[RMDB]
RNA sequence: GGGAACGACUCGAGUAGAGUCGAAAACAGAGAAGUUUCAUCCAGCAGGUCGGUUCUCAAACAUAUGUGAUGAAGCUCCAGGGUUUCCGUAAAUUAUUUUGCUAGAUCGUGUCACAUACGGAGCUGAUCAGUUUGUAGUGUUCUUUGGCACUAUCACCCUUAAAGCCUAGUUCGCUAGGCUUUAAGGAAAAGAAACAACAACAACAAC
Reactivity to DMS in 0.01 (KOAc 150mM, MgCl2 10mM, bicine 150mM(pH8.5), 24C), signal-to-noise 2, nucleotides 027 to 156: c030a160g010a140g040a050a100g000u000u010u000c040a110u010c020c040a090g030c080a120g020g000u000c030g020g010u000u010c060u000c080a110a080a200c060a080u000a060u000g030u000g010a050u000g000a100a050g010c010u000c010c040a120g020g020g010u010u010u000c020c050g010u010a040a050a150u000u010a120u000u010u010u000g010c030u010a090g000a050u000c050g020u010g020u000c020a040c070a070u010a100c080g000g010a070g000c020u010g000a080u000c030a090g030u010u000u010g000u000a080g030u000g000u010u000c120u000u000u020g000g000c030a030c020u000a050u000c080a120c130
Reactivity to 2A3 in 0.01 (KOAc 150mM, MgCl2 10mM, bicine 150mM(pH8.5), 24C), signal-to-noise 3, nucleotides 027 to 156: c050a010g040a010g040a280a010g010u010u020u030c020a070u030c040c000a020g060c010a020g020g010u010c020g020g050u070u000c060u030c050a040a090a010c070a050u140a010u150g060u010g020a020u030g020a020a030g010c030u060c050c010a040g050g000g000u020u050u010c020c000g010u030a040a090a060u110u110a090u060u090u150u140g090c080u070a090g010a100u080c030g030u060g020u130c030a050c010a080u080a110c080g050g000a010g000c010u000g020a050u090c030a070g050u040u180u140g030u050a050g000u010g040u060u120c060u090u090u070g010g010c000a010c020u000a030u070c020a070c000